The record gives the reactivity of an RNA of 177 nucleotides to 2A3 and DMS.
DMS adducts were read by reverse transcription with MarathonRT.
[RMDB]
RNA sequence: GGGAACGACUCGAGUAGAGUCGAAAAGAUAUGGAGCCCUUGGAGGUGGCACGAAUUCGGAAACGAACUAUGCCACUACCCACCCAAUGGCUCCUAAGUCAAAUCGAUACUGUUCGCAGUAUCGAAACCGUUAGGAGUACUUCGGUACUCCUAACGGAAAAGAAACAACAACAACAAC
Reactivity to 2A3 in 0.01 (KOAc 150mM, MgCl2 10mM, bicine 150mM(pH8.5), 24C), signal-to-noise 1, nucleotides 027 to 126: g000a000u070a030u090g010g000a000g040c020c010c010u000u000g040g000a090g000g050u030g010g080c030a010c040g130a120a300u060u000c010g010g040a050a050a040c040g000a030a010c050u050a060u050g020c000c000a010c010u020a010c030c030c050a070c010c000c010a000a000u010g000g010c000u010c020c010u030a100a000g000u040c020a020a000a230u020c000g000a010u020a010c030u020g040u080u110c300g040c130a030g000u000a030u040c010g020a040a010a000
Reactivity to DMS in 0.01 (KOAc 150mM, MgCl2 10mM, bicine 150mM(pH8.5), 24C), signal-to-noise 1, nucleotides 027 to 126: g000a030u050a300u010g010g000a000g020c050c000c120u000u000g010g000a120g010g000u000g000g090c020a000c050g010a080a100u000u000c010g000g000a050a070a170c000g020a070a070c160u000a160u000g000c000c000a000c030u000a090c100c130c090a300c050c010c010a100a030u000g000g000c010u000c010c000u010a000a160g000u000c030a120a080a190u000c000g000a020u000a020c000u000g000u000u040c150g000c020a000g000u020a000u000c000g000a000a020a060
Background
2A3 is a SHAPE reagent: it acylates the 2'-hydroxyl of flexible nucleotides of all four kinds. The RNA was probed in 150 mM KOAc, 10 mM MgCl2 and 150 mM bicine (pH 8.5) at 24 C. For DMS, 599 sequencing reads were counted.